[RMDB]
RNA sequence: GGGAACGACUCGAGUAGAGUCGAAAAGAUAUGGAAAUGUCAAGCUGAUGACCGGUACAUAGGGAACUGUAUGUCGGAAACGACAUACUCAGUACCUAUGUACCGCAAGGCUUGUAUUUCCUAAGUCGUUAAUCCUACGGUUCGCCGUAGGAUUAACAAAAGAAACAACAACAACAAC
Reactivity to DMS in 0.01 (KOAc 150mM, MgCl2 10mM, bicine 150mM(pH8.5), 24C), signal-to-noise 2, nucleotides 027 to 126: g000a120u010a300u030g000g020a000a040a010u000g020u000c000a000a020g010c000u000g000a090u010g000a120c300c010g000g000u010a000c000a000u000a000g010g010g010a100a210c160u010g000u000a020u000g000u020c000g010g010a070a070a170c020g000a010c000a020u000a000c010u000c020a070g000u010a130c040c000u000a000u010g000u000a000c000c000g000c010a030a040g000g020c000u010u010g010u000a030u000u000u000c000c000u010a060a110g000u000c100
Reactivity to 2A3 in 0.01 (KOAc 150mM, MgCl2 10mM, bicine 150mM(pH8.5), 24C), signal-to-noise 1, nucleotides 027 to 126: g070a000u140a040u250g020g100a010a000a000u190g240u300c010a000a000g000c010u060g040a300u270g040a300c080c050g000g000u020a000c010a030u000a000g000g020g040a040a000c010u020g000u000a000u010g010u030c000g040g020a110a070a090c000g040a010c000a010u000a030c000u000c010a000g020u030a000c000c000u000a000u010g000u000a010c000c000g000c000a000a010g010g000c010u000u030g000u020a030u000u000u000c010c000u020a150a060g170u090c070